[RMDB]
RNA sequence: GGGAACGACUCGAGUAGAGUCGAAAACCGACUACUGGAAGGAAGGCAAGCCCUACCUGGACGAGCUGGUCUUCAACGUGAUCCCGGACUCGGCCUCGCGCGCGGUGGCGUUCGAGCGCGGCAGCAAAUUAAUAGGGAUGUUCGCAUCCCUAUUAAUAAAAGAAACAACAACAACAAC
Reactivity to 2A3 in 0.01 (KOAc 150mM, MgCl2 10mM, bicine 150mM(pH8.5), 24C), signal-to-noise 5, nucleotides 027 to 126: c010c000g030a050c040u200a020c030u060g090g050a040a050g060g020a030a020g020g000c050a060a040g030c020c000c000u060a110c010c050u060g040g050a030c030g030a040g020c030u030g010g030u050c000u040u040c040a100a040c050g060u060g040a070u040c000c010c000g060g040a100c030u030c050g060g000c010c010u020c020g020c000g000c000g010c000g010g150u120g100g000c020g020u040u050c020g020a010g000c070g010c020g050g000c010a020g030c010a060a100
Reactivity to DMS in 0.01 (KOAc 150mM, MgCl2 10mM, bicine 150mM(pH8.5), 24C), signal-to-noise 9, nucleotides 027 to 126: c020c010g020a130c120u010a080c080u010g010g010a110a070g010g010a110a060g010g010c050a080a120g010c050c010c010u000a170c090c050u000g000g010a100c100g000a100g010c020u000g010g010u000c020u000u010c040a080a110c120g010u010g000a090u000c020c010c010g010g010a100c070u000c050g010g010c030c020u000c040g010c060g000c030g010c080g010g020u010g010g010c030g010u000u000c030g000a060g010c080g010c030g000g010c080a060g000c100a070a090
About this RNA
An RNA of 177 nucleotides, treated with 2A3 and DMS and read out base by base. It was measured as part of the RMDB library OK2TST. Conditions: 150 mM KOAc, 10 mM MgCl2 and 150 mM bicine (pH 8.5), 24 C. The DMS profile rests on 24,954 reads.